Source: RMDB library OK3TST, as collected in RNAgym. Structure probing data (2A3) for a 207-nucleotide construct. Values are in units of 0.01, from 0 to 300, in steps of 10. The reactions ran in a buffer of 150 mM KOAc, 10 mM MgCl2 and 150 mM bicine (pH 8.5), at 24 C. For 2A3 the reverse transcriptase was SuperScript II with manganese.
RNA sequence: GGGAACGACUCGAGUAGAGUCGAAAAGAUGGCGGGGUUGAGUUCGGUAUCUCGCGCAAAGCGGGCGGCUCCGCCUCGCUCGGCGGGGUCGUAGCCGACACGUCGCAUUUCUCCGGUGAGCCAUGCAGCGAAUGAGGGUGUAGGGCGGCUUGUCAUGCACCAGUGGGUUAUUCGUAACCCACUGGUGAAAAGAAACAACAACAACAAC
Reactivity to 2A3 in 0.01 (KOAc 150mM, MgCl2 10mM, bicine 150mM(pH8.5), 24C), signal-to-noise 1, nucleotides 027 to 156: g060a010u250g030g020c030g000g000g000g060u120u110g030a130g100u100u070c000g010g010u040a080u060c040u040c010g000c000g000c080a150a000a080g010c020g000g050g000c000g020g000c010u000c000c000g000c000c000u000c040g000c090u180c120g000g040c010g000g010g010g030u030c000g010u040a020g010c010c040g020a000c010a000c030g270u090c010g010c020a040u030u060u010c030u000c010c010g040g030u060g000a040g000c010c020a030u130g000c030a030g000c000g080a160a090u110g000a090g060g050g010u070g020u120a050g030g020g020c050g010g000c000u020u040g010u030c020a070u100g050